[RMDB]
RNA sequence: GGGAACGACUCGAGUAGAGUCGAAAACGCGCAUUGCGGCACGUUCGACGCGUGCUUGAGCAGGCCGACGUUUCCGGCCAUCAGUGCCGGUGCGGCGAACCGAACCGCUUGCCACAGGGGGAAGUUCGACCUGCUCAUUAUUCGUAAUGAGCAGGUCAAAAGAAACAACAACAACAAC
Reactivity to 2A3 in 0.01 (KOAc 150mM, MgCl2 10mM, bicine 150mM(pH8.5), 24C), signal-to-noise 6, nucleotides 027 to 126: c050g030c010g010c060a070u030u180g000c020g020g010c020a010c020g060u150u140c120g110a100c090g000c020g040u040g000c010u050u090g030a020g010c030a050g010g000c030c010g040a080c040g020u020u120u120c030c000g000g000c010c010a160u190c110a080g050u100g130c000c010g010g010u030g020c000g010g000c010g010a010a020c000c000g030a020a010c010c010g060c100u050u110g100c050c010a090c060a070g030g000g000g000g010a060a020g040u040u050c050
Reactivity to DMS in 0.01 (KOAc 150mM, MgCl2 10mM, bicine 150mM(pH8.5), 24C), signal-to-noise 3, nucleotides 027 to 126: c130g020c140g030c030a030u010u010g010c020g000g000c010a060c100g000u020u010c210g000a110c230g000c000g030u010g010c000u030u010g000a100g020c010a060g020g010c090c050g000a130c030g000u020u030u030c000c000g010g000c010c020a100u040c120a100g010u070g010c020c010g010g040u040g020c040g030g000c040g010a070a000c020c020g010a140a300c030c000g010c040u020u030g000c060c030a080c040a070g000g010g000g000g000a160a090g000u030u020c090